[RMDB]
The record gives the reactivity of an RNA of 177 nucleotides to 2A3. For 2A3 the reverse transcriptase was SuperScript II with manganese. The 2A3 profile rests on 385 reads.
RNA sequence: GGGAACGACUCGAGUAGAGUCGAAAAACAUCAGGGUUCGGAAGACAGCGAGUGAUAAAGAGCAGAUCUUAUUCGAGAUCAACCGCAUCCCCAAUCUAUUCAGGCAUCAUCAAAUAUCUGCGGACCACCGCAUCUCACGCUUCGGCGUGAGAUGCGGAAAAGAAACAACAACAACAAC
Reactivity to 2A3 in 0.01 (KOAc 150mM, MgCl2 10mM, bicine 150mM(pH8.5), 24C), signal-to-noise 1, nucleotides 027 to 126: a000c010a140u160c040a100g000g030g020u000u020c000g030g000a000a000g030a000c040a000g000c000g040a000g060u040g000a150u090a110a030a030g030a040g020c000a000g150a160u000c000u060u030a140u190u180c010g050a000g000a090u050c000a000a170c000c030g150c040a060u120c010c000c000c000a080a000u050c170u300a300u180u270c140a090g000g060c000a000u000c000a000u000c040a110a080a000u080a090u000c040u000g010c000g030g040a000c000c040a010